[RMDB]
RNA sequence: GGGAACGACUCGAGUAGAGUCGAAAAACCACGGGGAGGUGGAGAUGCCAUGCCGACCCGAAGAGGAAGAAGAGGACAUGGACGCGAACCGUGAGUGGAACCCUCGAUCCUUUAUUGGGGGGUACACGUCAUAAUCAACGUUCGCGUUGAUUAUGACAAAAGAAACAACAACAACAAC
Reactivity to 2A3 in 0.01 (KOAc 150mM, MgCl2 10mM, bicine 150mM(pH8.5), 24C), signal-to-noise 1, nucleotides 027 to 126: a020c010c000a010c010g000g000g010g010a120g090g070u160g110g120a140g040a100u160g070c000c020a030u000g060c000c040g050a070c010c000c010g040a130a050g050a070g030g050a040a080g020a010a040g000a080g000g000a040c010a040u030g010g010a010c010g030c030g090a000a000c020c030g020u030g010a030g000u020g040g000a080a030c010c020c020u000c000g050a080u080c020c120u210u160u180a040u030u110g000g000g010g030g000g000u080a010c000a020c060
Reactivity to DMS in 0.01 (KOAc 150mM, MgCl2 10mM, bicine 150mM(pH8.5), 24C), signal-to-noise 1, nucleotides 027 to 126: a140c040c020a110c040g020g000g000g000a270g020g020u000g110g000a060g020a100u020g010c020c000a060u000g020c000c010g010a170c070c040c010g010a080a020g010a060g020g010a090a050g020a080a060g000a070g000g000a130c030a050u000g000g000a070c000g020c030g000a090a030c030c070g000u000g030a120g010u010g000g020a190a150c000c000c000u000c010g000a010u020c290c200u000u040u000a030u010u000g010g000g020g030g000g000u000a030c050a020c010